[RMDB]
RNA sequence: GGGAACGACUCGAGUAGAGUCGAAAAACGGCCGGCCAUGCGCUAGACUGGCCGAUGUCUCGGCGCGUACAGCGGCCCUGAUCGAUGGAUCAGCGCAGCGUACUGCGCGUGGCGCUGCGUACCGCAGACCAGGAAUCUAGUUCGCUAGAUUCCUGGUAAAAGAAACAACAACAACAAC
Reactivity to DMS in 0.01 (KOAc 150mM, MgCl2 10mM, bicine 150mM(pH8.5), 24C), signal-to-noise 4, nucleotides 027 to 126: a120c030g000g010c070c030g000g010c020c040a030u010g010c050g000c080u000a070g010a050c040u000g000g010c040c040g010a050u010g000u000c050u000c040g010g010c010g030c080g010u000a020c060a110g050c010g010g000c000c050c020u000g010a020u000c000g020a210u020g000g000a010u000c010a070g010c240g000c000a020g010c060g000u000a040c030u010g030c020g000c030g020u000g000g000c060g010c010u010g020c020g010u000a110c050c060g010c090a080g030

An RNA of 177 nucleotides, treated with DMS and read out base by base. The DMS profile rests on 6,307 reads.